[RMDB]
RNA sequence: GGGAACGACUCGAGUAGAGUCGAAAAGAUAUGGAUAUCACAUGGGAGCUCUUCGGAAACGAAAGAGCAUCGAUCAUGGAUAUCCUAAGUCAAAACGAUAUGAUCGCGUUCGCGCGAUCAUAUCGAACAUGACACUCGAGUUCGCUCGAGUGUCAUGAAAAGAAACAACAACAACAAC
Reactivity to 2A3 in 0.01 (KOAc 150mM, MgCl2 10mM, bicine 150mM(pH8.5), 24C), signal-to-noise 1, nucleotides 027 to 126: g020a000u070a040u170g000g000a010u040a000u000c050a070c020a280u020g000g050g070a010g010c020u030c020u030u030c000g010g080a120a080a030c010g050a210a060a080g000a010g000c020a030u010c030g020a020u040c000a020u000g000g000a010u020a000u020c000c000u000a060a000g080u060c020a000a050a040a190c020g010a010u000a000u030g000a010u010c000g000c080g030u060u090c300g010c000g000c000g130a000u000c000a000u000a000u000c010g000a010a000
Reactivity to DMS in 0.01 (KOAc 150mM, MgCl2 10mM, bicine 150mM(pH8.5), 24C), signal-to-noise 1, nucleotides 027 to 126: g000a030u000a290u000g010g010a060u000a000u000c000a060c000a000u000g000g020g010a050g000c000u010c010u020u020c000g010g000a090a030a190c000g030a040a040a040g000a030g000c000a080u000c120g020a090u010c010a010u030g000g000a000u000a020u000c000c000u000a010a070g010u000c030a060a050a110a200c030g000a000u000a000u000g000a000u000c000g010c000g030u000u010c240g000c000g000c010g010a000u000c000a000u000a000u000c000g000a040a100

This 177-nucleotide RNA was probed chemically with 2A3 and DMS. The DMS profile rests on 1,275 reads. Values are in units of 0.01, from 0 to 300, in steps of 10. Source: RMDB library TTRDEL, as collected in RNAgym. Conditions: 150 mM KOAc, 10 mM MgCl2 and 150 mM bicine (pH 8.5), 24 C. For DMS the reverse transcriptase was MarathonRT.